[RMDB]
This 177-nucleotide RNA was probed chemically with 2A3 and DMS. 2A3 adducts were read by reverse transcription with SuperScript II with manganese. For DMS, 908 sequencing reads were counted.

RNA sequence: GGGAACGACUCGAGUAGAGUCGAAAAUUAAAUAACGUGAAGAAGCAGAGGAAGGACUGCAAGAACACGAACCAGCAAACAUCAAGAACAGCAGGAAGGAGCUGAAGAAGAUGAACCACCAAAAAAACAUUCUAAUGCGAUUCGUCGCAUUAGAAUGAAAAGAAACAACAACAACAAC
Reactivity to 2A3 in 0.01 (KOAc 150mM, MgCl2 10mM, bicine 150mM(pH8.5), 24C), signal-to-noise 2, nucleotides 027 to 126: u050u030a050a040a070u090a100a040c030g050u030g080a200a090g000a090a010g060c020a020g010a010g130g050a050a050g090g070a040c000u000g000c020a060a020g040a030a000c020a000c060g010a030a020c010c000a010g020c050a000a100a020c020a010u060c020a050a040g060a080a020c010a050g040c010a010g040g040a080a020g040g060a050g000c000u050g030a030a020g030a020a010g010a060u050g000a010a030c000c010a010c000c030a010a000a040a020a040a050a090
Reactivity to DMS in 0.01 (KOAc 150mM, MgCl2 10mM, bicine 150mM(pH8.5), 24C), signal-to-noise 2, nucleotides 027 to 126: u020u000a060a120a100u000a100a120c020g010u010g020a050a070g000a080a180g020c030a000g010a090g000g010a100a030g000g000a190c030u000g000c050a060a060g010a150a060c040a040c040g010a050a090c060c000a010g000c110a040a090a060c060a060u000c060a130a140g000a060a080c070a020g010c040a030g000g000a080a010g000g010a070g070c040u020g000a070a110g010a060a060g010a040u010g010a070a090c050c080a110c080c040a020a000a050a100a050a090a170